[RMDB]
RNA sequence: GGGAACGACUCGAGUAGAGUCGAAAAGUGGAGGCCUUCGGGCCUCCACAAAUAAAUUCAGCGGUAAUUCGUCCGCAAAUAUUACCGCUGAUGCGGACGAUAAAAGACAGAACUUCGGUUCUGUCAACGUAUACGUGAAGUUCGCUUCACGUAUACGAAAAGAAACAACAACAACAAC
Reactivity to DMS in 0.01 (KOAc 150mM, MgCl2 10mM, bicine 150mM(pH8.5), 24C), signal-to-noise 2, nucleotides 027 to 126: g030u000g000g020a010g020g020c000c000u010u030c160g030g040g040c000c010u000c000c000a000c020a010a060a050u010a070a110a080u000u000c020a000g020c010g000g010u010a020a060u000u000c090g020u000c050c050g000c070a040a060a050u000a060u000u000a090c000c010g000c020u010g000a030u010g010c040g000g010a030c050g000a090u010a050a060a090a080g020a000c000a010g000a020a000c000u000u000c170g010g000u000u000c000u010g000u000c000a020a040
Reactivity to 2A3 in 0.01 (KOAc 150mM, MgCl2 10mM, bicine 150mM(pH8.5), 24C), signal-to-noise 2, nucleotides 027 to 126: g000u000g010g020a010g060g010c010c090u090u090c300g090g030g000c010c000u010c010c000a000c000a000a000a000u010a000a000a010u080u020c010a010g000c000g030g010u030a070a070u070u100c040g040u010c060c040g060c050a000a040a010u110a000u010u040a050c030c010g000c020u000g020a000u030g020c020g010g060a030c020g020a010u040a150a130a010a020g000a000c000a000g000a000a000c000u060u140c220g070g010u000u000c000u000g000u000c000a000a000
The record gives the reactivity of an RNA of 177 nucleotides to DMS and 2A3.
For 2A3, 2,820 sequencing reads were counted.
Values cover nucleotides 27 to 126.
2A3 adducts were read by reverse transcription with SuperScript II with manganese.
Source: RMDB library M2PK50, as collected in RNAgym.